[RMDB]
RNA sequence: GGGAACGACUCGAGUAGAGUCGAAAACAUCAGGAGGACCUUCCGCGCACUUCCAAGCAGGAGCUUUCCUUCCAAGCGCACUUCCAAUCUACACGAGAGGAGGAGGAGGAGGAGGAUUCCCACAAAAGAGUAUGAAUGCUUUCGAGCAUUCAUACUCAAAAGAAACAACAACAACAAC
Reactivity to DMS in 0.01 (KOAc 150mM, MgCl2 10mM, bicine 150mM(pH8.5), 24C), signal-to-noise 2, nucleotides 027 to 126: c090a070u000c120a030g020g030a060g000g010a180c200c060u010u000c060c040g020c070g010c090a120c050u000u020c060c050a040a050g020c060a060g000g000a100g010c070u000u000u000c050c010u030u010c000c010a080a090g060c060g000c000a220c060u010u000c000c030a070a170u000c000u010a110c150a130c140g030a020g000a300g000g000a110g000g010a060g000g020a000g000g010a120g000g000a080g000g010a170u000u000c000c070c010a110c290a010a110a080a060
Reactivity to 2A3 in 0.01 (KOAc 150mM, MgCl2 10mM, bicine 150mM(pH8.5), 24C), signal-to-noise 1, nucleotides 027 to 126: c030a060u200c060a020g000g060a020g030g040a100c010c010u070u020c010c060g020c000g010c080a040c090u140u000c060c010a070a040g000c030a040g050g010a010g000c030u060u090u040c000c000u160u050c020c020a090a040g020c020g000c030a030c030u070u040c010c010a020a030u020c020u120a080c180a050c220g040a030g010a010g070g000a020g000g000a040g000g040a040g000g000a010g000g020a020g030g010a020u030u010c050c000c000a010c030a020a090a020a080